[RMDB]
RNA sequence: GGGAACGACUCGAGUAGAGUCGAAAAGAUAUGGAUUCUUCUUUGAUCUCACUCUGGUCGGAAACGACCAGAGGUGAGGGAGAAGGUCCUAAGUCAAAAGUUUAUGUACCUUCGGGUACAUAAACAACGUAUUGACAGACUUCGGUCUGUCAAUACGAAAAGAAACAACAACAACAAC
Reactivity to DMS in 0.01 (KOAc 150mM, MgCl2 10mM, bicine 150mM(pH8.5), 24C), signal-to-noise 2, nucleotides 027 to 126: g010a020u000a300u000g000g000a010u000u020c000u000u000c010u010u010u010g000a100u010c010u000c000a040c010u000c010u000g000g010u010c000g000g000a090a060a140c010g010a040c000c000a010g010a000g010g020u000g000a010g010g000g010a000g010a010a000g000g030u000c000c000u000a040a060g000u010c020a090a090a130a100g010u000u000u000a000u000g000u000a020c000c000u000u010c200g000g000g000u010a000c010a000u010a010a010a010c010a060a120
Reactivity to 2A3 in 0.01 (KOAc 150mM, MgCl2 10mM, bicine 150mM(pH8.5), 24C), signal-to-noise 2, nucleotides 027 to 126: g020a020u040a030u150g000g020a030u300u210c000u000u000c000u270u220u110g190a160u110c030u000c020a020c010u000c000u010g000g010u000c010g010g020a060a060a040c020g000a000c000c020a020g000a000g000g020u020g020a030g000g010g000a020g000a010a010g010g000u000c000c000u000a110a010g070u010c040a090a130a080a050g000u010u000u000a000u000g020u000a010c010c000u010u080c300g120g000g000u000a000c010a000u000a000a020a000c000a000a010
This 177-nucleotide RNA was probed chemically with DMS and 2A3. DMS adducts were read by reverse transcription with MarathonRT. For 2A3, 3,485 sequencing reads were counted. For DMS, 1,971 sequencing reads were counted. 2A3 adducts were read by reverse transcription with SuperScript II with manganese.